[RMDB]
RNA sequence: GGGAACGACUCGAGUAGAGUCGAAAACUACCAAAGAACUAGAUAACCUCUCCUUUGCAGAUUUCGGCGACCUGUUCAACGCGCCGAGCUUUACUACACGUUGAACAUUUAGUUCACAUGGUAGCAAGGCUGGUACUGCUUUCGAGCAGUACCAGCCAAAAGAAACAACAACAACAAC
Reactivity to 2A3 in 0.01 (KOAc 150mM, MgCl2 10mM, bicine 150mM(pH8.5), 24C), signal-to-noise 2, nucleotides 027 to 126: c010u010a000c010c000a030a130a000g000a010a010c000u010a000g020a030u230a220a220c010c100u130c020u050c090c020u160u150u110g040c000a010g020a300u000u070u070c010g000g070c040g010a150c000c040u060g020u090u020c060a070a010c040g010c000g010c020c000g020a000g000c010u090u010u100a060c030u040a000c010a000c090g030u010u020g000a010a000c000a080u000u000u090a000g000u020u000c000a020c050a140u140g000g010u010a000g020c010a040a060
Conditions: 150 mM KOAc, 10 mM MgCl2 and 150 mM bicine (pH 8.5), 24 C.
Chemical mapping of a 177-nucleotide RNA with 2A3.
The 2A3 profile rests on 664 reads.
It was measured as part of the RMDB library OK1LIB.